[RMDB]
RNA sequence: GGGAACGACUCGAGUAGAGUCGAAAAGAAAGAAAGAAGGCAAAAUGAUUAGGAACAUAUUUUCUACUGAGGAUGUAAAUGCAGGACAAAUCGUUAAGGAAUUCUUCGUUUAUGAUCUUAGUGCAAAGUACUCGCCAGAAUUCGUUCUGGCGAGUACAAAAGAAACAACAACAACAAC
Reactivity to 2A3 in 0.01 (KOAc 150mM, MgCl2 10mM, bicine 150mM(pH8.5), 24C), signal-to-noise 3, nucleotides 027 to 126: g030a000a060a000g060a050a090a000g050a020a020g070g000c120a050a050a040a070u120g000a130u070u190a060g080g020a100a000c030a010u120a100u050u040u060u070c060u050a090c000u050g020a020g040g010a040u070g000u050a000a040a000u050g000c010a000g000g040a010c080a050a070a020u080c050g070u110u150a110a090g060g060a050a060u040u000c010u020u000c000g020u000u030u010a020u030g120a030u010c000u000u030a050g000u050g090c050a050a000a050
Reactivity to DMS in 0.01 (KOAc 150mM, MgCl2 10mM, bicine 150mM(pH8.5), 24C), signal-to-noise 1, nucleotides 027 to 126: g040a040a090a080g000a020a080a040g010a110a030g000g070c120a030a000a090a050u070g000a030u000u010a080g010g000a120a000c040a050u070a140u000u000u060u020c000u000a050c050u010g000a030g030g000a060u000g040u000a000a000a030u010g050c150a000g000g060a060c190a040a060a030u010c010g010u000u050a030a110g000g030a080a070u000u000c000u000u000c000g030u000u000u000a000u000g030a050u020c040u000u020a030g000u010g000c050a100a080a100